The record gives the reactivity of an RNA of 207 nucleotides to 2A3 and DMS. Values cover nucleotides 27 to 156. It was measured as part of the RMDB library OK3TST. For DMS, 3,548 sequencing reads were counted.
[RMDB]
RNA sequence: GGGAACGACUCGAGUAGAGUCGAAAAAUGGAAGUUUGAUAGGAAGUGGAAUGGUCUCGAUGAUGUUCAGCUCAUCGUUGUGGCCCCCGGAAAGGCAGCCAUAAACAUCCAAACCAAACCAGGCAUCUUCAAAACGCCACAGGGGGAAAUAGGAGCAUCUAAUUGUUCAAUUCGUUGAACAAUUAGAAAAAGAAACAACAACAACAAC
Reactivity to 2A3 in 0.01 (KOAc 150mM, MgCl2 10mM, bicine 150mM(pH8.5), 24C), signal-to-noise 2, nucleotides 027 to 156: a010u040g020g010a020a050g030u040u060u090g090a090u130a040g020g030a060a040g030u050g040g050a050a060u040g000g010u000c010u010c080g020a030u060g000a010u050g040u100u170c060a030g040c040u010c010a080u040c060g040u040u050g020u010g060g010c000c000c000c000c000g030g040a070a000a000g010g000c000a010g050c030c010a060u110a040a060a020c030a030u050c030c010a040a020a040c040c000a140a030a000c050c000a010g020g000c010a050u030c030u170u040c030a140a150a050a030c030g000c000c010a030c050a070g030g010g020g000g050a000a050a000u140a020g020g000a030g010c010a010
Reactivity to DMS in 0.01 (KOAc 150mM, MgCl2 10mM, bicine 150mM(pH8.5), 24C), signal-to-noise 2, nucleotides 027 to 156: a130u010g030g000a090a030g010u000u000u000g020a150u000a140g010g010a060a140g030u010g000g010a090a130u000g020g010u000c010u000c020g040a060u000g010a030u000g030u000u010c120a210g020c100u000c050a060u000c030g020u010u000g040u010g010g040c010c000c020c030c020g000g010a050a090a070g020g010c030a160g000c000c040a100u000a060a040a070c030a110u000c020c060a060a070a130c020c000a020a100a120c060c020a120g030g000c000a110u000c060u000u000c070a050a060a030a100c060g010c000c020a090c060a110g000g020g040g010g010a000a050a080u000a080g010g010a070g050c080a130